[RMDB]
RNA sequence: GGGAACGACUCGAGUAGAGUCGAAAAUGGUGUCGAAGUGCGUCGGAGUGAGCUCCCACCCCUUGGUGGUUGCCAUGAUGUCGAGAGCAGCUGACGAGUACAAGUACCCGUGUCCUGCUGCUCGAAGAGCAGCCGAGGGAUUCGUCCCUCGGCUGCUAAAAGAAACAACAACAACAAC
Reactivity to 2A3 in 0.01 (KOAc 150mM, MgCl2 10mM, bicine 150mM(pH8.5), 24C), signal-to-noise 3, nucleotides 027 to 126: u080g050g030u060g040u090c050g040a160a040g060u050g090c000g030u010c020g020g030a040g040u050g030a030g050c010u050c030c000c000a020c010c000c000c050u040u260g030g000u020g000g030u040u050g030c000c030a050u030g040a060u050g050u080c040g010a030g000a000g150c000a010g020c010u050g020a020c010g010a020g010u010a020c080a230a080g070u020a040c000c010c040g010u050g100u120c040c070u020g000c000u010g020c000u020c000g010a050a010g030
Reactivity to DMS in 0.01 (KOAc 150mM, MgCl2 10mM, bicine 150mM(pH8.5), 24C), signal-to-noise 9, nucleotides 027 to 126: u000g010g020u010g010u000c030g000a070a090g010u000g000c050g020u000c050g010g010a180g010u000g010a100g020c040u000c050c010c020a170c040c020c210c110u010u010g020g030u000g010g010u000u000g000c020c030a070u000g000a180u010g010u010c030g010a130g010a030g010c010a020g020c020u010g000a040c000g010a020g010u000a020c050a090a170g020u000a020c000c010c000g010u000g010u010c120c080u000g010c000u000g000c000u000c000g000a060a080g000